Structure probing data (2A3 and DMS) for a 170-nucleotide construct. Reactivities are given for positions 27 through 129. 2A3 adducts were read by reverse transcription with SuperScript II with manganese. For DMS the reverse transcriptase was MarathonRT. Conditions: 150 mM KOAc, 10 mM MgCl2 and 150 mM bicine (pH 8.5), 24 C. High 2A3 reactivity points to a flexible backbone, as in loops and unpaired stretches.
RNA sequence: GGGAACGACUCGAGUAGAGUCGAAAAUUGACUAGAGGCACAUUGGAACCAGAAAAUUUCAAUAGUGUCACUAGAUUGAUGUGUAACUUAGGUCCUGACAUAUUUUUAAGUAUGUGCUACAGGUGUCAACUCUCUAUGUUCGCAUAGAGAAAAAGAAACAACAACAACAAC
Reactivity to 2A3 in 0.01 (KOAc 150mM, MgCl2 10mM, bicine 150mM(pH8.5), 24C), signal-to-noise 9, nucleotides 027 to 129: u050u030g030a000c000u000a000g000a040g010g000c000a000c000a000u010u000g000g000a000a020c040c040a110g270a090a130a010a010u010u000u000c010a000a000u030a110g000u000g000u010c010a010c020u000a000g130a130u000u060g040a030u040g090u040g030u090a050a050c040u030u080a040g060g010u050c010c000u010g030a020c000a010u030a040u030u090u040u040u040a120a020g010u000a020u030g020u020g030c040u050a060c030a050g030g020u040g060u080c020a020a040c030
Reactivity to DMS in 0.01 (KOAc 150mM, MgCl2 10mM, bicine 150mM(pH8.5), 24C), signal-to-noise 8, nucleotides 027 to 129: u000u000g020a050c020u000a030g000a050g020g020c020a010c020a050u040u000g000g000a000a000c080c080a170g020a090a110a070a210u030u020u000c000a020a010u000a120g050u000g040u020c000a090c010u010a030g020a150u000u000g020a030u020g030u030g010u040a040a070c050u020u020a060g000g000u000c020c000u010g000a070c000a040u000a010u020u020u050u040u020a040a120g010u000a020u000g020u040g010c150u030a150c070a050g000g000u000g030u010c080a090a110c080